[RMDB]
RNA sequence: GGGAACGACUCGAGUAGAGUCGAAAAAAUAGCUUGGCUAUCUCACUUCCCCUCGUUCUCUUGCAGAACUUUGAUUUUAACGAACUUAAAUAAAAGCCCUGUUGUUUAGCGUAUCGUUGCACUUGUCGGAGGCGGCGCUUCGGCGCCGCCAAAAGAAACAACAACAACAAC
Reactivity to DMS in 0.01 (KOAc 150mM, MgCl2 10mM, bicine 150mM(pH8.5), 24C), signal-to-noise 1, nucleotides 027 to 129: a280a300u000a070g000c000u130u130g000g000c000u000a290u000c200u020c000a260c140u250u000c000c000c000c000u140c050g000u000u000c000u000c000u240u000g090c300a010g000a000a050c000u000u000u060g000a170u010u010u010u010a170a170c000g000a270a220c000u000u000a000a220a000u000a300a200a010a000g000c000c000c000u000g000u010u000g000u000u000u000a080g000c000g000u000a200u000c180g050u200u000g160c300a000c000u000u000g000u000c000g000g000a000
Conditions: 150 mM KOAc, 10 mM MgCl2 and 150 mM bicine (pH 8.5), 24 C. This 170-nucleotide RNA was probed chemically with DMS. Values cover nucleotides 27 to 129. DMS adducts were read by reverse transcription with MarathonRT. It was measured as part of the RMDB library 15KLIB.